[RMDB]
Background: An RNA of 177 nucleotides, treated with DMS and 2A3 and read out base by base. DMS adducts were read by reverse transcription with MarathonRT. Source: RMDB library OK2TRN, as collected in RNAgym. The RNA was probed in 150 mM KOAc, 10 mM MgCl2 and 150 mM bicine (pH 8.5) at 24 C.

RNA sequence: GGGAACGACUCGAGUAGAGUCGAAAAAGAAAUUGUCAGCCUGUUAUCUCUGUGGCAUUGGUACAAAGUAGUAAUCCAUGGUAAUUGCACUUGAUGAAUCAAAAGAACAAAUCUUAUCUACAUGUACGAUAUGUACCGAUUUCGAUCGGUACAUAUCAAAAGAAACAACAACAACAAC
Reactivity to DMS in 0.01 (KOAc 150mM, MgCl2 10mM, bicine 150mM(pH8.5), 24C), signal-to-noise 4, nucleotides 027 to 126: a060g000a060a090a080u010u000g010u010c060a060g000c050c030u010g010u000u010a060u000c040u000c050u000g020u000g010g000c110a080u010u000g000g000u010a020c070a060a070a110g000u000a080g000u010a080a060u000c040c030a080u010g030g010u000a040a040u010u010g010c040a020c050u000u000g010a080u000g010a080a060u010c090a030a040a060a080g010a050a080c110a030a050a090u010c060u000u000a060u000c050u000a050c140a070u000g010u000a060c180
Reactivity to 2A3 in 0.01 (KOAc 150mM, MgCl2 10mM, bicine 150mM(pH8.5), 24C), signal-to-noise 4, nucleotides 027 to 126: a030g050a030a050a020u080u050g050u060c010a000g060c010c010u040g030u110u100a130u010c080u000c020u070g030u050g060g000c030a020u010u110g030g000u040a050c030a020a200a040g030u060a030g040u010a070a020u030c030c030a060u080g000g070u110a110a090u060u070g020c010a030c040u010u080g020a030u040g060a090a060u060c040a020a000a030a130g050a060a020c030a050a080a020u050c020u060u060a080u070c020u080a100c030a110u110g050u060a020c070